[RMDB]
RNA sequence: GGGAACGACUCGAGUAGAGUCGAAAACAGAUAAGAAAAGACCGAGAGGUUCAAGCUUAUAGGGCAGAAAGCGGGGGACAGCAGUACUAAACAUUUCCUGUGGCUGAGACGAAGGUAGUACUCCAACAAAACGAGUACUAGUUCGCUAGUACUCGAAGAAGGACUUAUAGUUCGCUAUAAGUCCUUCAAAAGAAACAACAACAACAAC
Reactivity to 2A3 in 0.01 (KOAc 150mM, MgCl2 10mM, bicine 150mM(pH8.5), 24C), signal-to-noise 2, nucleotides 027 to 156: c040a010g130a100u220a230a070g020a040a110a020a030g020a020c010c050g020a020g020a040g080g030u030u060c100a070a000g010c000u050u040a030u120a140g020g000g000c060a040g130a100a040a030g040c070g010g000g000g000g000a030c000a020g000c030a000g010u020a030c030u060a010a100a000c030a100u040u100u150c000c000u010g010u040g050g000c020u030g000a020g010a020c030g030a040a000g040g000u010a000g010u020a030c020u000c050c000a000a040c010a060a110a020a080c010g010a000g010u000a000c000u000a000g020u030u010c050g000c140u000a000g000u000a010c000u010c010g000a020a000
Reactivity to DMS in 0.01 (KOAc 150mM, MgCl2 10mM, bicine 150mM(pH8.5), 24C), signal-to-noise 1, nucleotides 027 to 156: c090a190g010a160u010a080a040g000a140a120a140a280g000a060c000c020g000a150g000a300g010g010u000u000c060a130a170g000c020u000u000a030u000a110g000g010g000c010a080g010a040a050a090g010c070g030g010g000g000g010a050c040a060g000c010a060g020u000a120c040u010a050a000a040c070a090u000u010u000c000c010u000g040u000g010g030c030u000g020a100g010a100c030g010a090a070g000g020u000a030g000u000a020c010u010c000c010a040a120c050a060a040a070a110c030g050a020g000u000a020c020u000a010g010u000u000c300g000c000u000a010g000u000a030c060u000c000g000a000a060

Record summary:
Source: RMDB library M2RFPK, as collected in RNAgym. The record gives the reactivity of an RNA of 207 nucleotides to 2A3 and DMS. The 2A3 profile rests on 1,145 reads. The RNA was probed in 150 mM KOAc, 10 mM MgCl2 and 150 mM bicine (pH 8.5) at 24 C. 2A3 adducts were read by reverse transcription with SuperScript II with manganese. DMS adducts were read by reverse transcription with MarathonRT.